[RMDB]
RNA sequence: GGGAACGACUCGAGUAGAGUCGAAAAGGGUGGGAUGUGAAACAUACCCGUCGUGGACAGUGGCAGGUCCACCAUUUGGACACCAUAGAGUGCGGCUCUAUCAUGAUGAGCGGCUCCAUCACGAAUAGGCAGGUUUCUGCUUCGGCAGAGGCCUGCCAAAAGAAACAACAACAACAAC
Reactivity to DMS in 0.01 (KOAc 150mM, MgCl2 10mM, bicine 150mM(pH8.5), 24C), signal-to-noise 4, nucleotides 027 to 126: g000g000g000u000g020g030g020a090u000g000u030g000a130a060a180c080a080u050a110c010c020c000g030u000c060g030u010g000g010a030c130a100g010u000g020g010c080a130g010g010u000c000c010a060c160c070a060u020u030u000g000g030a100c000a100c010c040a060u040a100g010a030g000u020g000c000g010g000c030u000c010u010a060u030c260a080u030g000a120u040g000a040g000c030g000g000c000u000c010c090a090u010c110a060c130g030a060a060u040a110
Reactivity to 2A3 in 0.01 (KOAc 150mM, MgCl2 10mM, bicine 150mM(pH8.5), 24C), signal-to-noise 6, nucleotides 027 to 126: g110g020g010u050g010g040g010a070u030g070u080g120a160a040a000c020a020u110a170c000c000c000g020u020c020g010u050g000g020a020c020a150g030u060g030g070c040a040g010g140u000c000c000a010c060c000a050u090u050u100g020g010a010c000a020c030c000a040u180a040g050a000g010u300g300c070g030g000c030u000c000u020a100u130c080a150u190g120a050u110g010a010g010c000g020g010c010u000c020c040a100u180c030a020c060g080a060a110u090a130

An RNA of 177 nucleotides, treated with DMS and 2A3 and read out base by base.
Conditions: 150 mM KOAc, 10 mM MgCl2 and 150 mM bicine (pH 8.5), 24 C.
The data come from the RNA Mapping Database (RMDB), library OK1LIB.
2A3 adducts were read by reverse transcription with SuperScript II with manganese.